This 207-nucleotide RNA was probed chemically with DMS and 2A3.
High DMS reactivity at an A or C suggests that its Watson-Crick edge is free.
For DMS the reverse transcriptase was MarathonRT.
The reactions ran in a buffer of 150 mM KOAc, 10 mM MgCl2 and 150 mM bicine (pH 8.5), at 24 C.
RNA sequence: GGGAACGACUCGAGUAGAGUCGAAAAAUGUAGCAAGUGAAUAGUUGAUGGGUGAUGUAACAAAGAACAUGUCAAGUUUAUAGGAUAGAUCAUUGAUGAAACUUGGUUUGUGCGGGAUCAAUGUCUGUAAAAGACGCCACCGUUGACUUCCCUUGCAACGGUGUCGAAUAUUCGUAUUCGACACCGUAAAAGAAACAACAACAACAAC
Reactivity to DMS in 0.01 (KOAc 150mM, MgCl2 10mM, bicine 150mM(pH8.5), 24C), signal-to-noise 2, nucleotides 027 to 156: a080u000g010u000a100g030c040a070a040g030u000g030a050a070u010a030g020u030u000g010a030u000g020g070g030u000g010a170u000g000u000a070a110c070a080a080a290g020a040a040c010a010u000g000u020c060a010a050g030u000u000u000a050u000a300g010g000a120u000a100g000a120u000c120a100u000u020g020a110u020g030a040a020a010c000u000u000g000g000u000u000u000g020u000g050c070g060g010g020a070u010c040a070a080u010g030u020c000u000g020u000a100a060a150a050g010a040c000g040c050c010a010c010c010g000u010u000g010a050c020u000u000c020c030c000u000u000g010c020a210
Reactivity to 2A3 in 0.01 (KOAc 150mM, MgCl2 10mM, bicine 150mM(pH8.5), 24C), signal-to-noise 2, nucleotides 027 to 156: a020u130g020u120a020g020c050a000a000g000u020g070a120a150u100a160g000u010u020g020a030u140g160g000g050u030g020a110u140g040u150a060a020c070a070a100a050g050a050a010c030a020u050g030u000c010a020a000g000u000u030u000a180u090a090g090g060a050u120a120g050a110u170c020a110u050u200g040a100u160g050a080a000a000c000u010u020g000g020u030u050u040g000u030g000c040g000g030g040a020u100c050a050a060u140g000u030c010u000g030u070a060a030a060a060g010a000c010g050c000c020a020c000c000g000u010u010g000a000c000u010u010c020c030c000u000u000g000c010a000